[RMDB]
Structure probing data (DMS and 2A3) for a 207-nucleotide construct. The DMS profile rests on 4,876 reads. The reactions ran in a buffer of 150 mM KOAc, 10 mM MgCl2 and 150 mM bicine (pH 8.5), at 24 C. Reactivities are given for positions 27 through 156. Source: RMDB library OK3TST, as collected in RNAgym.
RNA sequence: GGGAACGACUCGAGUAGAGUCGAAAAGGGAGUCCCUCCGCCCUAGAGCUUUUGUCCGAGUGACAUCAUUCCACACGCAGUGCUUUGAGGCCACUUUGUGAGACUCUGAUACCCACAAUGACAAGUAAUCCAGCAGUGGGAACUGUGAUGAGCUCCCCUCUGUCGUUAAAUUCGUUUAACGACAGAGAAAAGAAACAACAACAACAAC
Reactivity to DMS in 0.01 (KOAc 150mM, MgCl2 10mM, bicine 150mM(pH8.5), 24C), signal-to-noise 2, nucleotides 027 to 156: g000g020g020a120g010u010c020c030c010u000c030c040g000c030c020c010u000a050g010a100g010c020u000u000u000u000g030u000c010c040g030a150g010u000g010a040c040a060u010c030a090u000u010c010c030a080c020a170c100g020c130a170g000u000g060c050u000u000u010g020a070g000g000c020c020a060c030u000u000u000g020u010g020a110g000a070c030u000c020u000g010a180u000a090c030c010c010a040c060a050a110u020g000a080c070a040a090g010u000a080a130u000c050c050a090g010c030a120g020u000g010g000g010a030a040c020u010g030u000g000a040u010g000a120g000c000u000c030c020c010
Reactivity to 2A3 in 0.01 (KOAc 150mM, MgCl2 10mM, bicine 150mM(pH8.5), 24C), signal-to-noise 6, nucleotides 027 to 156: g030g000g020a040g050u110c030c020c000u010c020c030g020c010c000c020u050a070g020a050g040c040u070u100u120u100g040u020c040c070g100a050g040u100g030a030c010a060u050c020a050u120u100c020c010a040c010a020c110g110c090a030g010u030g070c050u120u140u230g090a080g060g030c040c000a030c020u030u070u060g040u030g030a160g010a050c010u020c020u100g030a060u070a100c010c050c010a020c010a040a120u110g030a010c010a060a070g080u060a120a080u070c090c050a020g030c010a010g060u050g020g040g030a030a030c030u060g010u050g080a110u030g020a020g030c010u020c010c000c010